[RMDB]
RNA sequence: GGGAACGACUCGAGUAGAGUCGAAAAUGGAAACGAAUGGGAGGGAGACAUAUAGAGACUGGAGGUCGAAGGUGGCCUGUCUUAGCUUUUCCGGUGAUGGAUGUCAUUCAACCUUAGCUGUGCACCAGAAAAUCCCUUGAAAUGUGGCAAUUUUAUAUAAUUAGUACCUAUUCGUAGGUACUAAUUAAAAAGAAACAACAACAACAAC
Reactivity to DMS in 0.01 (KOAc 150mM, MgCl2 10mM, bicine 150mM(pH8.5), 24C), signal-to-noise 2, nucleotides 027 to 156: u010g000g000a110a070a070c050g010a070a080u000g000g020g010a120g030g000g010a080g030a110c090a090u000a190u010a160g000a150g000a090c050u000g010g040a080g040g030u000c060g000a060a110g030g010u000g000g010c040c040u000g020u000c040u010u000a100g000c090u010u000u000u000c060c010g000g040u000g020a150u000g020g000a080u000g020u000c030a070u000u000c040a050a040c030c040u020u000a100g040c030u000g000u010g030c000a110c050c010a110g000a070a080a070a080u000c010c000c010u010u000g010a070a050a120u000g010u000g000g000c030a070a100u010u000u000u000a090u010a300
Reactivity to 2A3 in 0.01 (KOAc 150mM, MgCl2 10mM, bicine 150mM(pH8.5), 24C), signal-to-noise 1, nucleotides 027 to 156: u040g040g060a020a020a030c040g060a100a040u040g020g050g020a030g000g030g000a020g020a020c060a010u280a050u090a100g060a000g020a030c010u040g080g010a010g000g020u010c050g020a020a050g060g050u100g010g030c000c010u010g020u010c060u060u070a020g000c010u000u020u080u020c060c030g030g020u030g010a030u050g040g000a010u080g030u020c010a050u160u040c000a000a050c010c000u060u080a020g030c030u020g010u030g100c020a020c000c000a040g000a010a070a010a010u020c000c000c000u010u020g040a050a130a030u100g020u030g020g010c000a020a030u100u030u180u260a170u300a080